[RMDB]
RNA sequence: GGGAACGACUCGAGUAGAGUCGAAAAGAUAUGGAUGUGGUAGGGAGCUCCAUAUCGGAAACGAUAUGUGAGCGACGAUCUACUCACAUCCUAAGUCAAAACAUAAAAUCCUUCGGGAUUUUAUGAACCAUAUGCAUUUGUUCGCAAAUGCAUAUGGAAAAGAAACAACAACAACAAC
Reactivity to DMS in 0.01 (KOAc 150mM, MgCl2 10mM, bicine 150mM(pH8.5), 24C), signal-to-noise 3, nucleotides 027 to 126: g010a020u010a020u010g000g000a010u000g020u000g000g010u000a000g000g000g010a020g010c000u000c000c010a010u010a000u000c000g010g010a000a000a020c000g010a010u000a000u000g010u000g010a010g030c010g010a030c280g000a020u000c000u000a020c000u010c010a010c010a010u000c000c000u000a000a060g000u000c010a120a080a150a300c010a010u010a000a010a010a010u000c000c000u000u010c290g030g010g000a010u000u000u000u000a000u000g000a100a230
Reactivity to 2A3 in 0.01 (KOAc 150mM, MgCl2 10mM, bicine 150mM(pH8.5), 24C), signal-to-noise 2, nucleotides 027 to 126: g000a000u010a000u060g000g000a000u000g000u000g030g000u010a010g020g000g030a020g000c000u000c000c000a000u000a000u000c000g000g000a000a000a000c000g000a000u010a000u020g230u110g010a010g000c010g000a010c000g000a000u000c000u000a010c030u040c070a000c000a000u000c000c000u000a010a000g000u000c000a030a040a110a120c010a000u010a010a010a000a010u010c010c000u050u120c280g210g010g000a000u010u010u000u010a010u010g010a020a020
An RNA of 177 nucleotides, treated with DMS and 2A3 and read out base by base. For 2A3 the reverse transcriptase was SuperScript II with manganese. DMS adducts were read by reverse transcription with MarathonRT. Conditions: 150 mM KOAc, 10 mM MgCl2 and 150 mM bicine (pH 8.5), 24 C.